[RMDB]
The record gives the reactivity of an RNA of 177 nucleotides to DMS and 2A3.
RNA sequence: GGGAACGACUCGAGUAGAGUCGAAAAUACAUAUGCAUGUGUCUGGGAUCUGCAUGUCUAAUUUUAACUCUCUAGCAUUAUUCGUUCAUACGAACAGACGGACGGGCAGAUGGACAUGGCCAGAUUGCCCGUAAAUGACUUUCGAGUCAUUUACGGGAAAAGAAACAACAACAACAAC
Reactivity to DMS in 0.01 (KOAc 150mM, MgCl2 10mM, bicine 150mM(pH8.5), 24C), signal-to-noise 8, nucleotides 027 to 126: u040a060c140a070u000a040u050g000c090a070u030g010u020g010u000c030u000g000g010g020a060u010c040u010g020c020a020u010g000u010c020u020a070a070u020u020u010u020a040a200c080u000c070u010c040u020a110g010c110a070u020u020a210u020u010c030g000u000u030c170a120u050a090c080g000a030a040c140a080g000a090c120g000g020a040c130g000g000g000c100a040g000a050u010g000g000a060c030a020u010g000g000c040c050a040g000a060u000u030g020
Reactivity to 2A3 in 0.01 (KOAc 150mM, MgCl2 10mM, bicine 150mM(pH8.5), 24C), signal-to-noise 9, nucleotides 027 to 126: u190a010c060a030u200a040u190g100c060a040u100g070u020g020u060c010u040g040g040g060a090u030c030u060g010c010a010u000g020u000c020u030a160a260u030u070u110u110a090a090c020u030c010u000c050u110a070g060c060a110u070u100a080u140u130c020g020u030u100c050a070u130a300c080g040a060a020c030a040g080a070c060g020g010a010c030g010g030g000c040a020g010a050u030g000g000a000c000a020u020g040g010c030c000a010g010a060u050u140g050
The reactions ran in a buffer of 150 mM KOAc, 10 mM MgCl2 and 150 mM bicine (pH 8.5), at 24 C.
For DMS, 21,792 sequencing reads were counted.
For DMS the reverse transcriptase was MarathonRT.